[RMDB]
RNA sequence: GGGAACGACUCGAGUAGAGUCGAAAACUACAAUAUUUUCGAGAGAACUUUGCUUCGAUUUUUCGGCUGCUUCGGGGAUGCUCGUACUGUAAGUCCUGCCGGACGAGUCCUUUGGCCGGCGGUGUAGCCAGUGCCUACUAUUCGUAGUAGGCACUGGAAAAGAAACAACAACAACAAC
Reactivity to 2A3 in 0.01 (KOAc 150mM, MgCl2 10mM, bicine 150mM(pH8.5), 24C), signal-to-noise 4, nucleotides 027 to 126: c060u220a090c090a130a080u170a170u180u190u030u060c090g030a070g000a000g070a210a080c060u090u100u150g050c020u070u030c010g150a170u080u030u010u070u180c020g040g000c000u040g010c000u030u030c020g030g000g010g020a040u080g030c020u030c030g070u090a040c050u050g030u120a080a000g040u010c000c060u030g000c000c000g020g010a010c000g010a020g070u230c060c000u050u020u090g030g000c000c000g000g000c020g010g010u060g000u040a030g030
Reactivity to DMS in 0.01 (KOAc 150mM, MgCl2 10mM, bicine 150mM(pH8.5), 24C), signal-to-noise 2, nucleotides 027 to 126: c050u020a030c240a110a100u020a110u040u010u010u020c040g000a160g000a080g000a110a080c040u010u000u020g030c120u000u000c030g010a070u000u000u020u040u000c010g020g020c010u000g000c030u020u020c000g000g020g010g020a090u060g010c040u030c080g000u000a020c070u000g010u000a080a120g000u000c070c000u010g040c000c000g000g000a010c020g000a040g000u040c160c130u000u010u000g030g000c000c000g020g030c050g000g010u010g010u020a130g000

An RNA of 177 nucleotides, treated with 2A3 and DMS and read out base by base. The data come from the RNA Mapping Database (RMDB), library OK1LIB. The reactions ran in a buffer of 150 mM KOAc, 10 mM MgCl2 and 150 mM bicine (pH 8.5), at 24 C. DMS adducts were read by reverse transcription with MarathonRT.